[RMDB]
RNA sequence: GGGAACGACUCGAGUAGAGUCGAAAACGCUGGGUAAUGGAAAGACAUGGCUGUACUGAAGCGCGCACGGUACCAGCCAACAGCUUUCCCGCUUACCUGUGCUGAAGCGCGCACGGCAACCGAAAGGUGCGAAAAGAUGAAGAGUUCGCUCUUCAUCCCGUUGAAAGUGGUUCGCCACUUUCAACGGAAAAGAAACAACAACAACAAC
Reactivity to 2A3 in 0.01 (KOAc 150mM, MgCl2 10mM, bicine 150mM(pH8.5), 24C), signal-to-noise 2, nucleotides 027 to 156: c040g040c090u060g030g000g000u070a040a080u200g090g000a000a000a000g030a060c110a250u300g000g000c000u000g000u010a000c000u030g050a250a050g010c010g000c000g000c050a030c010g000g000u010a040c100c160a030g000c000c020a100a040c050a080g010c000u000u000u000c000c000c000g020c010u020u010a000c000c050u010g030u030g020c000u030g010a070a040g010c000g000c000g000c000a040c000g010g000c030a070a130c000c020g110a100a030a040g030g000u090g040c090g040a080a050a010a080g000a010u000g000a000a000g000a000g050u140u150c270g010c080u010c000u020u000c000a000u030c000